[RMDB]
RNA sequence: GGGAACGACUCGAGUAGAGUCGAAAAGCCCCGGAGCCAGCGGCUCCGCGCUUGGCACAACAAUGGUAUGCGUGGUUUGCGGCCCUAAUUUAUUCAGCACGCGACUGCCGCAUCCCGCACGGGAGGCUAAAACUUUUUCAUUCGUGAAAAAGUUUUAAAAAGAAACAACAACAACAAC
Reactivity to 2A3 in 0.01 (KOAc 150mM, MgCl2 10mM, bicine 150mM(pH8.5), 24C), signal-to-noise 8, nucleotides 027 to 126: g040c000c000c010c010g030g010a010g000c000c020a060g080c080g100g020c020u010c010c010g000c000g000c010u100u100g030g000c020a030c020a170a070c050a130a200u190g030g020u090a020u060g010c010g020u080g020g020u040u050u180g000c010g000g020c020c010c000u110a160a170u110u140u210a140u110u200c070a030g030c050a030c100g040c020g030a020c030u040g010c030c010g000c000a020u020c010c010c000g030c010a020c020g030g020g000a050g030g020c010
Reactivity to DMS in 0.01 (KOAc 150mM, MgCl2 10mM, bicine 150mM(pH8.5), 24C), signal-to-noise 7, nucleotides 027 to 126: g000c020c010c020c060g010g010a040g020c000c010a060g010c160g010g010c010u000c010c010g010c110g010c040u010u010g010g020c040a080c100a130a120c190a100a110u030g010g010u020a060u010g010c010g010u020g010g010u000u010u020g050c000g000g000c020c140c090u020a080a060u030u030u040a090u030u020c170a080g010c060a060c040g000c040g010a060c060u000g000c050c020g010c010a020u000c030c010c010g020c090a060c090g000g010g010a080g000g010c080
Source information: Source: RMDB libraries RFM100 and RFMREP, as collected in RNAgym. This 177-nucleotide RNA was probed chemically with 2A3 and DMS. The reactions ran in a buffer of 150 mM KOAc, 10 mM MgCl2 and 150 mM bicine (pH 8.5), at 24 C. DMS (dimethyl sulfate) methylates the pairing face of unpaired adenines and cytosines. For DMS the reverse transcriptase was MarathonRT.